Notes: Structure probing data (DMS and 2A3) for a 177-nucleotide construct. It was measured as part of the RMDB library RFM100. For DMS the reverse transcriptase was MarathonRT. Conditions: 150 mM KOAc, 10 mM MgCl2 and 150 mM bicine (pH 8.5), 24 C.

[RMDB]
RNA sequence: GGGAACGACUCGAGUAGAGUCGAAAACUGAGUGCCUGAAUUUGCCUUUUCAUUUUACUUCAUCCUCCAAGGAGUUCAAUCACCUGGCGUGACUUCACUUCUUUUAAGCAAAAGAGUGGUGCCCAGGAGCGUUCAAAUUUUUCGAAAUUUGAACGCUAAAAGAAACAACAACAACAAC
Reactivity to DMS in 0.01 (KOAc 150mM, MgCl2 10mM, bicine 150mM(pH8.5), 24C), signal-to-noise 2, nucleotides 027 to 126: c040u000g000a050g050u040g000c000c020u010g000a070a140u000u020u010g020c040c000u000u000u000u000c040a100u020u000u030u040a040c060u030u020c040a050u010c040c030u020c120c010a040a120g000g000a090g010u000u000c050a110a130u040c200a110c030c010u010g010g000c180g010u010g000a100c080u030u000c000a040c000u000u040c000u010u010u030u030a070a160g000c130a040a040a000a000g010a030g000u000g000g000u010g020c060c000c020a020g000g000
Reactivity to 2A3 in 0.01 (KOAc 150mM, MgCl2 10mM, bicine 150mM(pH8.5), 24C), signal-to-noise 4, nucleotides 027 to 126: c070u060g050a010g040u120g050c020c010u040g040a060a070u070u030u110g040c030c000u080u080u050u130c090a140u010u070u070u100a090c020u050u070c020a100u030c020c030u000c000c030a060a050g020g030a070g040u060u100c070a070a070u120c060a050c020c000u000g040g000c090g050u020g100a030c010u090u090c060a010c030u130u170c000u000u110u000u060a180a130g100c180a030a000a070a000g020a020g030u040g000g030u020g010c000c000c000a000g010g000